[RMDB]
RNA sequence: GGGAACGACUCGAGUAGAGUCGAAAAGUCUGUGCGUUUCCAUUUGAGUAUCCUGAAAACGGGCUUUUCAGCAUGGAACGUAAAUAUUAAAUAGUAGGAGUGCAUAGUGGCCCGUAUAGCAGGCAUUGAGGCGAGGAUUGUUUCGACAAUCCUCGAACAUUGACACUAGGUUCGCCUAGUGUCAAUGAAAAGAAACAACAACAACAAC
Reactivity to DMS in 0.01 (KOAc 150mM, MgCl2 10mM, bicine 150mM(pH8.5), 24C), signal-to-noise 3, nucleotides 027 to 156: g010u000c020u020g060u000g000c050g020u000u000u000c010c010a200u000u000u020g020a150g020u000a090u000c030c010u000g030a050a030a200a080c060g000g020g010c040u000u000u000u000c050a220g040c040a030u010g000g030a060a050c000g000u010a050a050a160u000a100u000u010a080a080a150u000a230g020u000a110g010g000a240g030u000g040c030a130u010a150g020u000g010g000c020c010c010g050u000a030u010a100g030c030a040g040g010c100a080u000u000g010a110g020g020c020g020a030g030g000a040u000u010g000u000u000u010c170g040a080c010a020a020u000c020c000u000c000g000a010a070
Reactivity to 2A3 in 0.01 (KOAc 150mM, MgCl2 10mM, bicine 150mM(pH8.5), 24C), signal-to-noise 3, nucleotides 027 to 156: g040u010c050u040g060u040g080c050g010u020u040u000c030c040a070u090u070u090g070a080g040u100a110u130c010c020u000g020a060a020a020a040c030g030g000g000c010u120u090u040u100c050a000g000c020a020u060g040g060a080a020c040g000u050a030a070a010u120a040u080u240a090a060a120u180a020g060u020a040g020g140a050g020u030g000c030a040u080a150g080u080g050g010c000c010c000g030u020a020u040a010g030c010a000g010g010c050a040u030u110g100a080g050g050c020g000a000g000g000a010u020u000g040u010u100u040c090g050a010c010a000a000u000c000c000u000c000g010a000a000